[RMDB]
Description: An RNA of 207 nucleotides, treated with DMS and 2A3 and read out base by base. Conditions: 150 mM KOAc, 10 mM MgCl2 and 150 mM bicine (pH 8.5), 24 C. For DMS the reverse transcriptase was MarathonRT. Source: RMDB library OK3TST, as collected in RNAgym.
RNA sequence: GGGAACGACUCGAGUAGAGUCGAAAAUGAAAGUGCCUUAGCGAGCAAACUGACAGUCAGAACGCUAAAAGAAACAGAAACAAUCUAUGACGCUGACGGAAACGUUGAAAAAGUAAAGGUUAAAGAAAAAGAACUUGACAAAGAUAGCUUAGUAGCGCUUAGCUUAUGCGUUCGCGCAUAAGCUAAGAAAAGAAACAACAACAACAAC
Reactivity to DMS in 0.01 (KOAc 150mM, MgCl2 10mM, bicine 150mM(pH8.5), 24C), signal-to-noise 1, nucleotides 027 to 156: u020g010a130a090a090g000u000g000c000c000u000u000a100g010c040g000a140g010c070a040a050a140c040u000g000a040c020a140g000u020c040a080g000a020a300c040g030c040u000a020a100a140a180g020a110a110a300c030a140g000a000a110a080c060a010a170u000c050u000a050u020g000a070c030g020c000u010g000a100c050g020g040a120a060a100c060g040u000u000g000a080a080a070a070a080g000u000a040a050a050g000g000u050u000a050a100a060g040a050a070a140a050a010g000a080a040c000u000u000g050a300c000a030a070a110g010a160u020a100g000c020u000u010a060g020u000a160g020c170g010
Reactivity to 2A3 in 0.01 (KOAc 150mM, MgCl2 10mM, bicine 150mM(pH8.5), 24C), signal-to-noise 3, nucleotides 027 to 156: u120g010a060a030a000g090u040g040c010c000u040u040a010g010c030g040a030g010c070a060a060a070c020u050g060a040c040a060g000u100c010a020g040a120a050c060g000c040u060a050a020a000a040g060a040a060a010c050a020g300a300a040a010c020a040a060u300c040u120a050u090g030a030c020g000c050u010g050a020c010g010g000a070a050a000c040g000u010u070g020a080a070a020a000a000g070u090a080a060a040g050g010u010u080a030a100a000g070a020a050a020a010a020g100a040a010c020u080u060g010a010c040a060a040a000g040a090u110a020g030c020u060u060a040g030u060a010g140c030g000
The 2A3 profile rests on 1,540 reads.